[RMDB]
RNA sequence: GGGAACGACUCGAGUAGAGUCGAAAAUUUUGACAUUUUCACAGCUUGAUACCUAAUCAGAAAAGCAGUGUGGUAUAGUGGUUAGGGGCAGGUUCCAUCUGGACUUAACUCAGAUCUGAAUUUGGUCUCUACCUCUAAUUAGAAGGUAACGUGGGAAAUUACGUAGGUAUUUCGAUACCUACGUAAUAAAAGAAACAACAACAACAAC
Reactivity to 2A3 in 0.01 (KOAc 150mM, MgCl2 10mM, bicine 150mM(pH8.5), 24C), signal-to-noise 5, nucleotides 027 to 156: u110u110u050u150g070a030c020a060u050u040u060u090c040a020c010a040g020c030u060u080g040a050u100a140c000c010u070a100a100u140c050a060g090a110a120a030a020g030c050a060g060u040g010u040g080g070u120a050u030a110g030u030g030g020u070u090a010g000g000g010g020c000a000g020g000u020u000c020c020a010u000c010u020g040g040a100c070u180u140a080a040c040u060c100a000g010a050u020c050u130g020a030a050u030u010u080g130g040u020c010u000c000u010a010c010c000u010c000u000a090a100u060u120a040g080a120a010g060g020u110a100a020c060g020u110g040g020g020a110a040
Reactivity to DMS in 0.01 (KOAc 150mM, MgCl2 10mM, bicine 150mM(pH8.5), 24C), signal-to-noise 3, nucleotides 027 to 156: u000u010u000u020g020a100c070a130u000u000u010u010c040a110c070a120g000c060u000u010g020a120u000a110c010c040u010a090a080u000c100a100g010a090a060a060a090g010c030a090g010u000g020u000g040g030u000a110u000a100g020u010g010g000u000u000a030g020g020g000g050c020a030g010g020u000u000c000c260a050u000c040u000g030g030a050c030u000u010a100a140c040u000c030a050g010a040u000c090u000g020a040a050u000u000u010g040g020u000c010u010c010u000a030c000c000u000c000u000a030a080u010u000a110g010a110a060g010g010u000a020a080c060g010u000g000g030g000a070a090
Overview: Chemical mapping of a 207-nucleotide RNA with 2A3 and DMS. For 2A3 the reverse transcriptase was SuperScript II with manganese. Reactivities are given for positions 27 through 156. Source: RMDB library OK3TST, as collected in RNAgym.